The record gives the reactivity of an RNA of 207 nucleotides to 2A3 and DMS.
The RNA was probed in 150 mM KOAc, 10 mM MgCl2 and 150 mM bicine (pH 8.5) at 24 C.
[RMDB]
RNA sequence: GGGAACGACUCGAGUAGAGUCGAAAAGUGCCACUUUGGAGAGCUCUGUGGUGGAGUUUCAACUCUCUGGAUAAGGUGGAAUAGCUGAACCAUUGUGCCUCCAUAGAUUUUCACAACCCUGAAAGUAACAGCAGUUGGGAGGAUGAAAGAGGGCUAAUAGUAAAUCCAGUUUCGACUGGAUUUACUAAAAAGAAACAACAACAACAAC
Reactivity to 2A3 in 0.01 (KOAc 150mM, MgCl2 10mM, bicine 150mM(pH8.5), 24C), signal-to-noise 1, nucleotides 027 to 156: g030u050g000c010c000a040c030u020u130u080g010g040a010g000a040g010c000u020c000u010g040u050g020g090u090g100g060a080g040u120u140u060c040a070a130c000u020c000u000c050u070g070g020a180u230a150a050g010g020u010g000g090a030a180u120a080g060c010u060g040a050a000c000c000a040u060u070g040u020g010c000c010u020c000c010a010u070a100g060a090u020u030u100u170c030a030c000a030a080c000c000c000u030g030a140a090a010g100u130a080a030c020a040g070c000a010g010u020u060g010g010g000a060g030g020a040u040g060a020a040a040g010a050g050g000g000c000u000a090a110
Reactivity to DMS in 0.01 (KOAc 150mM, MgCl2 10mM, bicine 150mM(pH8.5), 24C), signal-to-noise 2, nucleotides 027 to 156: g010u020g020c000c020a010c030u000u010u000g010g000a060g020a080g030c010u010c040u000g020u000g030g030u000g010g000a120g030u010u010u010c020a070a010c000u000c000u010c040u010g020g050a170u010a040a070g010g030u000g040g000a080a110u000a130g020c040u010g000a110a150c060c050a220u010u000g010u000g010c000c000u020c010c000a120u000a150g000a140u000u000u000u000c050a080c000a030a060c010c090c000u000g020a100a090a180g010u010a110a150c040a030g030c000a060g020u000u000g030g010g010a080g000g010a090u000g010a010a110a110g000a040g030g020g020c020u000a050a180

Background: For DMS, 3,427 sequencing reads were counted. Source: RMDB library OK3TST, as collected in RNAgym. High 2A3 reactivity points to a flexible backbone, as in loops and unpaired stretches.